[RMDB]
RNA sequence: GGGAACGACUCGAGUAGAGUCGAAAAAGAAGAAGUUUUCUGUUGUGCGGAUAAACUAAAAGUGGAAGGUUAUGUUUCUAGCACAAAACCACUUAGUUAUGCAGGAAAUAUUAUCGAUGACUUAAAACAUGAAUCAUAGCUUCGGCUAUGAUUCAUGAAAAGAAACAACAACAACAAC
Reactivity to 2A3 in 0.01 (KOAc 150mM, MgCl2 10mM, bicine 150mM(pH8.5), 24C), signal-to-noise 1, nucleotides 027 to 126: a000g080a010a000g030a020a000g010u020u090u000u000c010u020g040u110u010g090u010g090c210g000g120a090u080a110a130a010c010u020a070a060a060a060g020u010g000g030a130a080g220g000u140u080a070u120g050u030u200u190c060u030a000g020c030a000c000a090a000a040a040c020c000a000c020u000u030a030g000u020u010a010u140g030c000a000g000g110a030a000a060u170a110u080u080a050u040c040g090a060u070g050a110c050u080u130a060a120a000a000
Reactivity to DMS in 0.01 (KOAc 150mM, MgCl2 10mM, bicine 150mM(pH8.5), 24C), signal-to-noise 2, nucleotides 027 to 126: a100g000a090a140g010a150a180g010u000u000u000u020c000u000g030u000u000g010u000g020c070g020g020a070u010a040a030a020c030u000a080a050a080a060g000u000g000g000a070a130g000g000u000u020a070u000g000u000u000u000c080u000a130g020c060a050c070a050a040a130a130c010c010a020c050u010u000a020g000u010u000a030u000g010c020a170g010g000a000a000a010u010a050u010u000a030u000c050g020a130u010g010a060c070u010u000a050a050a070a160
An RNA of 177 nucleotides, treated with 2A3 and DMS and read out base by base. The reactions ran in a buffer of 150 mM KOAc, 10 mM MgCl2 and 150 mM bicine (pH 8.5), at 24 C. The DMS profile rests on 1,209 reads.